[RMDB]
RNA sequence: GGGAACGACUCGAGUAGAGUCGAAAAAUCGUGAAUUUGAUGAAGAGCCGUAUCAAGUAUGUUUCGGGUGGCCAGGCGCAACGUAGCUAUUGGCUGCCGACCGACGGUAAGAUGGACAAUAGCGACGAAACGGGUAAAAUUUCGAUUUUACCCGUUUAAAAGAAACAACAACAACAAC
Reactivity to DMS in 0.01 (KOAc 150mM, MgCl2 10mM, bicine 150mM(pH8.5), 24C), signal-to-noise 9, nucleotides 027 to 126: a090u000c050g010u000g010a140a110u000u000u000g010a090u010g000a140a110g010a160g010c020c030g000u000a070u010c070a070a100g010u000a060u010g010u000u000u010c050g020g020g010u000g010g020c010c020a050g000g000c070g010c110a100a130c300g010u000a090g010c010u000a130u000u000g000g010c000u000g000c020c010g000a050c160c050g000a060c070g010g010u010a050a110g010a090u000g010g000a060c060a030a040u010a150g000c020g000a050c150g010
Reactivity to 2A3 in 0.01 (KOAc 150mM, MgCl2 10mM, bicine 150mM(pH8.5), 24C), signal-to-noise 3, nucleotides 027 to 126: a000u080c030g010u040g080a120a110u060u030u120g060a090u040g030a040a050g080a020g100c020c010g010u020a040u180c020a020a080g050u050a110u240g090u020u100u070c070g090g010g010u020g000g000c010c000a030g010g030c010g000c030a040a140c100g130u150a040g000c010u020a080u070u080g000g000c000u000g030c020c000g000a010c020c020g060a030c000g000g000u010a040a070g060a070u140g020g000a000c000a000a040u070a030g040c030g020a010c000g000
Structure probing data (DMS and 2A3) for a 177-nucleotide construct.
High DMS reactivity at an A or C suggests that its Watson-Crick edge is free.
The RNA was probed in 150 mM KOAc, 10 mM MgCl2 and 150 mM bicine (pH 8.5) at 24 C.
As a SHAPE reagent, 2A3 marks flexible, mostly unpaired nucleotides at the ribose 2'-OH.